[RMDB]
RNA sequence: GGGAACGACUCGAGUAGAGUCGAAAACGUUGUCAUCGACAUCACCCUAUGCAUUCAUGCUCUGUAAGGAUGCGCCGAAAGGUGAGCAAGCCCGAGUUGCCCAGACCUGAAAUGCAACACUUUAGAGAAAACCCGAAGCAGUUCGCUGCUUCGGGAAGCUAUACAUCUGCUUCGGCAGAUGUAUAGCAAAAGAAACAACAACAACAAC
Reactivity to DMS in 0.01 (KOAc 150mM, MgCl2 10mM, bicine 150mM(pH8.5), 24C), signal-to-noise 1, nucleotides 027 to 156: c040g000u000u010g020u000c040a210u040c020g000a100c050a150u000c040a050c000c020c030u010a080u000g020c030a100u000u000c050a110u010g040c020u000c030u000g000u000a090a120g000g030a050u000g030c020g000c080c040g050a020a110a140g060g000u000g020a100g010c010a070a260g000c110c030c040g000a080g020u010u000g060c030c030c030a090g010a080c020c040u000g000a070a140a020u010g030c090a000a040c080a190c040u000u010u000a110g000a270g000a140a040a100a130c080c000c000g020a050a030g020c000a010g030u000u000c300g020c050u000g000c000u000u000c000g030g000g010a000a030
Reactivity to 2A3 in 0.01 (KOAc 150mM, MgCl2 10mM, bicine 150mM(pH8.5), 24C), signal-to-noise 2, nucleotides 027 to 156: c050g000u010u020g000u040c070a150u090c220g010a010c000a010u010c020a130c000c000c000u040a050u060g000c020a000u020u010c050a040u130g000c010u000c000u020g030u040a040a020g000g010a000u000g000c000g030c010c000g030a070a020a020g010g000u030g010a010g060c020a020a020g030c020c050c030g100a090g030u060u060g040c000c000c040a030g040a080c020c070u040g050a070a080a050u040g000c010a050a040c030a040c060u210u180u140a140g020a000g010a070a130a060a020c050c000c000g000a000a000g000c000a000g010u060u110c140g010c130u000g000c000u000u000c000g010g000g010a000a000